[RMDB]
RNA sequence: GGGAACGACUCGAGUAGAGUCGAAAAAAACAUUCUCCUGCACAGUUUUGUAAUACACAUACAUUCUAAAAUUAUGAACAUGGUGCUUAGAAUUAUAAGGAGUAUAAAGCAUGACCAGACUGGGAUGGUGUCCGCACCAUCAACUGUAGUGCUAUUAGCCUACUGAAUUUUUCGAAAUUCAGUAGGCAAAAGAAACAACAACAACAAC
Reactivity to 2A3 in 0.01 (KOAc 150mM, MgCl2 10mM, bicine 150mM(pH8.5), 24C), signal-to-noise 3, nucleotides 027 to 156: a000a020a000c090a080u140u050c010u000c000c010u020g060c000a000c010a050g020u000u060u140u040g020u040a030a030u170a040c040a010c050a080u270a080c050a110u160u170c080u180a060a080a140a100u050u040a020u020g010a020a000c010a050u110g070g010u000g010c000u060u070a060g080a210a120u190u130a070u090a260a050g000g010a010g050u030a050u060a160a070a000g000c000a020u020g010a020c010c130a010g060a090c060u230g110g130g020a000u000g000g000u020g010u010c070c100g030c060a000c010c000a000u000c000a030a010c000u010g020u020a000g010u010g000c000u010a090u050u090a030
Reactivity to DMS in 0.01 (KOAc 150mM, MgCl2 10mM, bicine 150mM(pH8.5), 24C), signal-to-noise 2, nucleotides 027 to 156: a050a060a100c030a120u000u010c020u000c000c030u000g000c090a140c020a160g040u000u000u000u000g030u020a100a040u010a040c040a060c050a100u020a090c040a070u010u010c030u000a060a050a040a090u010u010a060u010g010a010a020c070a120u010g010g000u000g000c040u000u000a020g010a080a040u000u000a080u010a110a080g000g020a100g030u000a080u000a060a050a060g020c010a020u000g010a170c130c010a070g000a120c120u000g000g050g040a050u000g000g050u000g000u000c070c220g050c040a020c010c000a000u000c000a080a070c060u010g000u000a210g040u000g000c010u000a120u010u010a210
Conditions: 150 mM KOAc, 10 mM MgCl2 and 150 mM bicine (pH 8.5), 24 C. Chemical mapping of a 207-nucleotide RNA with 2A3 and DMS. It was measured as part of the RMDB library OK3TST. For 2A3 the reverse transcriptase was SuperScript II with manganese. For DMS, 2,692 sequencing reads were counted. For 2A3, 1,527 sequencing reads were counted.